Annotation: Chemical mapping of a 177-nucleotide RNA with DMS and 2A3. The DMS profile rests on 484 reads. 2A3 is a SHAPE reagent: it acylates the 2'-hydroxyl of flexible nucleotides of all four kinds. Values are in units of 0.01, from 0 to 300, in steps of 10. For 2A3, 772 sequencing reads were counted. The reactions ran in a buffer of 150 mM KOAc, 10 mM MgCl2 and 150 mM bicine (pH 8.5), at 24 C. For DMS the reverse transcriptase was MarathonRT.
RNA sequence: GGGAACGACUCGAGUAGAGUCGAAAACAUGACGAGUUCGCUCGUCAUGAAAGAAAGUAAGAUAGUCUGAAGCGCCAGACUAGCGCAAAAGAAAGAAAGAAAAAAGCAAACUCUUCGGAGUUUGCAAGUUUAGUGUCUGGUUCGCCAGACACUAAACAAAAGAAACAACAACAACAAC
Reactivity to DMS in 0.01 (KOAc 150mM, MgCl2 10mM, bicine 150mM(pH8.5), 24C), signal-to-noise 1, nucleotides 027 to 126: c000a000u000g000a000c000g000a040g010u050u060c250g010c000u000c000g010u000c000a000u000g000a090a110a060g000a190a080a150g000u000a150a130g000a040u020a000g010u000c000u000g000a110a270g010c160g000c190c010a040g000a110c060u000a000g010c040g000c050a050a060a090a130g000a050a110a070g040a150a050a150g000a000a040a010a040a110a160g000c000a000a000a000c000u000c000u000u000c190g020g020a010g010u000u000u000g050c000a010a010
Reactivity to 2A3 in 0.01 (KOAc 150mM, MgCl2 10mM, bicine 150mM(pH8.5), 24C), signal-to-noise 1, nucleotides 027 to 126: c030a010u050g010a020c030g000a000g000u030u080c110g110c070u010c030g000u010c000a000u010g000a040a000a010g040a020a090a000g050u180a050a080g070a180u060a000g040u060c010u020g050a120a050g140c040g090c050c020a030g020a090c000u000a000g040c060g040c030a140a000a060a060g080a100a180a030g130a030a110a030g110a010a270a020a010a000a000g030c000a020a000a000c000u000c020u070u090c300g050g020a000g020u000u000u010g000c000a010a000